An RNA of 177 nucleotides, treated with 2A3 and DMS and read out base by base. For DMS the reverse transcriptase was MarathonRT. Reactivities are given for positions 27 through 126. The reactions ran in a buffer of 150 mM KOAc, 10 mM MgCl2 and 150 mM bicine (pH 8.5), at 24 C. It was measured as part of the RMDB library OK2TST.
[RMDB]
RNA sequence: GGGAACGACUCGAGUAGAGUCGAAAACGGAAAGUUUAGCCAAUAAUAAUGGCUGUUAACUUACUGGGCAUUUACCUUCUGCCAGGUACUGUUCUAAGCCUUUUUAUGGAUUAACCUAUUUAAUCCACAUGGACUAACCGUUCGCGGUUAGUCCAUGAAAAGAAACAACAACAACAAC
Reactivity to 2A3 in 0.01 (KOAc 150mM, MgCl2 10mM, bicine 150mM(pH8.5), 24C), signal-to-noise 1, nucleotides 027 to 126: c020g000g000a120a010a020g010u030u030u040a010g000c000c050a150a060u300a180a040u200a180a120u070g010g050c000u030g060u070u090a020a020c010u030u070a060c010u040g000g040g080c010a030u000u110u090a050c020c050u050u080c060u090g160c050c020a010g050g020u000a030c040u040g060u100u040c050u050a080a150g000c000c000u040u120u010u060u090a030u060g010g000a010u060u050a030a030c030c010u010a160u150u140u010a000a000u040c000c000a000
Reactivity to DMS in 0.01 (KOAc 150mM, MgCl2 10mM, bicine 150mM(pH8.5), 24C), signal-to-noise 2, nucleotides 027 to 126: c090g000g030a100a050a040g000u000u000u000a010g030c000c010a010a080u000a200a150u000a210a070u030g000g030c010u010g000u010u010a030a010c000u000u000a080c060u000g000g010g010c030a050u020u000u010a070c090c060u000u010c170u000g000c060c080a090g010g000u000a050c290u010g000u000u000c070u000a110a150g010c050c000u010u010u000u000u010a120u010g020g000a020u000u010a010a040c220c170u030a160u010u000u000a010a010u010c010c000a130